The record gives the reactivity of an RNA of 177 nucleotides to DMS and 2A3. Conditions: 150 mM KOAc, 10 mM MgCl2 and 150 mM bicine (pH 8.5), 24 C.
RNA sequence: GGGAACGACUCGAGUAGAGUCGAAAAGAGGGUAACUCGUCCGCCGUAAACCCGAGGUUUCCUGGGCAAGGCUAAUCCUCCCAGGGUCAGUCGGGGGCUAAGGCGAGGCCGGAAGGCGUAGUCGAAGUAAUCUGGUGCUAUUCGUAGCACCAGAUUAAAAAGAAACAACAACAACAAC
Reactivity to DMS in 0.01 (KOAc 150mM, MgCl2 10mM, bicine 150mM(pH8.5), 24C), signal-to-noise 5, nucleotides 027 to 126: g030a140g000g000g010u020a060a140c050u010c040g010u010c030c060g010c020c030g000u010a090a100a280c010c010c000g000a020g000g010u020u020u030c000c000u020g000g010g000c200a070a030g000g010c300u050a120a170u030c020c000u000c020c010c010a020g000g010g010u000c070a040g020u000c000g010g000g010g000g010c050u010a150a180g000g000c000g000a040g000g010c030c020g000g050a080a080g000g020c040g030u020a100g000u000c020g000a180a090g010
Reactivity to 2A3 in 0.01 (KOAc 150mM, MgCl2 10mM, bicine 150mM(pH8.5), 24C), signal-to-noise 4, nucleotides 027 to 126: g120a040g030g040g000u090a100a070c000u010c010g010u000c000c020g000c020c000g060u140a100a100a100c000c000c000g010a020g020g000u110u150u220c020c000u010g000g000g000c120a080a000g020g070c160u220a070a100u170c020c030u130c010c000c000a000g000g010g010u030c010a020g140u010c000g000g010g020g000g000c010u020a000a050g010g000c000g000a020g010g030c010c000g030g000a070a020g050g010c030g020u120a060g040u040c040g010a030a000g020